[RMDB]
RNA sequence: GGGAACGACUCGAGUAGAGUCGAAAAAUAAACCACCACCAGCGCGACCUGGUCCACCACGAGCUGGUCGGCGGCCUCGGGCGCUCCCGCCACCACCGCGACCACCUCCUCGCGCAGGUACAAAAAAGUUAUACACAAGCUUCGGCUUGUGUAUAACAAAAGAAACAACAACAACAAC
Reactivity to 2A3 in 0.01 (KOAc 150mM, MgCl2 10mM, bicine 150mM(pH8.5), 24C), signal-to-noise 1, nucleotides 027 to 126: a000u170a050a090a040c000c060a030c060c020a020c010c020a040g020c030g030c030g030a030c030c050u100g000g040u040c050c070a170c000c010a040c100g020a020g010c070u000g030g000u030c060g080g030c010g000g000c000c030u090c080g040g010g000c030g030c070u080c070c070c000g020c010c010a020c000c010a010c000c030g010c030g010a000c000c000a010c000c010u060c000c020u020c000g000c000g000c010a030g020g010u040a030c090a000a150a010a010a000a020
Reactivity to DMS in 0.01 (KOAc 150mM, MgCl2 10mM, bicine 150mM(pH8.5), 24C), signal-to-noise 2, nucleotides 027 to 126: a040u000a050a110a190c030c000a080c200c090a030c010c000a060g010c020g040c000g020a050c130c070u000g020g000u020c080c080a040c110c040a080c090g000a090g000c150u000g000g000u000c100g000g010c040g010g010c070c040u010c160g000g010g010c040g030c080u010c070c070c030g000c040c020a120c060c120a030c060c010g000c050g000a020c020c100a030c070c040u020c060c120u010c000g000c040g000c030a000g000g040u010a080c160a000a050a070a020a040a090